The record gives the reactivity of an RNA of 177 nucleotides to DMS and 2A3. The DMS profile rests on 628 reads. For 2A3, 1,498 sequencing reads were counted. The data come from the RNA Mapping Database (RMDB), library TTRDEL. Reactivities are given for positions 27 through 126.

RNA sequence: GGGAACGACUCGAGUAGAGUCGAAAAGAUAUGGAGGUCGUCAACAGCUAUAAGUAUCGGAAACGAUACAUAGACAUGACGCUACUCCUAAGUCAAAGAUGUGACUAAGUUCGCUUAGUCACAUCAACAUGACUCAUCGCUUCGGCGAUGAGUCAUGAAAAGAAACAACAACAACAAC
Reactivity to DMS in 0.01 (KOAc 150mM, MgCl2 10mM, bicine 150mM(pH8.5), 24C), signal-to-noise 1, nucleotides 027 to 126: g010a030u020a190u040g010g000a050g020g000u010c010g030u000c000a030a140c300a100g000c090u030a000u040a160a060g000u000a000u000c010g010g000a100a090a070c010g020a070u000a010c020a040u000a020g000a070c120a150u000g000a010c010g010c080u000a180c000u010c000c000u000a030a140g000u000c010a080a080a120g000a020u010g000u000g000a040c000u000a010a000g000u000u010c240g000c000u000u000a000g000u000c010a010c000a000u000c000a040a130
Reactivity to 2A3 in 0.01 (KOAc 150mM, MgCl2 10mM, bicine 150mM(pH8.5), 24C), signal-to-noise 1, nucleotides 027 to 126: g040a010u110a070u110g000g000a060g030g030u070c010g000u000c020a110a100c050a260g060c010u000a000u000a300a040g000u000a000u000c020g000g040a110a040a000c000g000a030u000a000c000a020u010a000g040a140c090a090u060g000a000c010g030c050u290a300c000u040c010c010u000a050a040g020u010c050a000a100a300g030a000u010g000u000g000a020c000u010a020a000g000u060u140c280g090c080u000u000a000g000u000c020a010c000a000u000c000a000a000